RNA sequence: GGGAACGACUCGAGUAGAGUCGAAAACUCAAUGUAGGGAAUAACAUUGAAUUGAUACAAAUACCUUUUUGGGUGUAGGGAAAAACACCGAAUUGAUACAAAUACCUUUCUCAAUGUAGGGAAUAACAAAACAGGCAUCGCUUCGGCGAUGCCUGAAGGAUAUAUCCUACUUCGGUAGGAUAUAUCCAAAAGAAACAACAACAACAAC
Reactivity to DMS in 0.01 (KOAc 150mM, MgCl2 10mM, bicine 150mM(pH8.5), 24C), signal-to-noise 2, nucleotides 027 to 156: c020u000c030a110a040u000g010u000a080g000g010g000a150a170u000a070a090c000a040u000u000g010a050a060u010u000g000a070u000a080c040a050a210a050u000a020c000c000u000u000u000u020u020g020g030g000u010g030u000a130g020g010g010a100a080a150a120a050c020a030c000c020g010a000a030u000u020g000a030u000a030c030a040a110a060u000a020c000c000u010u000u000c140u000c010a040a040u010g010u010a090g050g000g020a130a100u000a050a060c060a060a080a110a200c020a020g010g010c020a000u000c000g030c000u000u020c300g060g030c000g010a000u000g000c000c000u000g010a000a070
Reactivity to 2A3 in 0.01 (KOAc 150mM, MgCl2 10mM, bicine 150mM(pH8.5), 24C), signal-to-noise 6, nucleotides 027 to 156: c010u000c010a010a020u040g010u030a110g020g120g080a070a180u110a130a020c020a010u020u020g020a070a080u100u130g040a070u110a200c080a040a120a040u110a070c010c020u060u080u050u070u080g130g000g000u040g010u040a030g040g030g030a080a120a040a000a000c010a010c000c000g020a030a040u070u090g050a030u080a130c060a030a100a020u100a080c000c010u000u100u050c040u020c020a040a100u120g040u070a050g010g010g040a020a080u120a070a040c100a050a050a030a020c000a000g000g000c000a000u000c010g010c020u030u070c130g050g000c000g000a000u010g010c000c000u000g000a000a010

Conditions: 150 mM KOAc, 10 mM MgCl2 and 150 mM bicine (pH 8.5), 24 C.
Chemical mapping of a 207-nucleotide RNA with DMS and 2A3.
For 2A3, 4,338 sequencing reads were counted.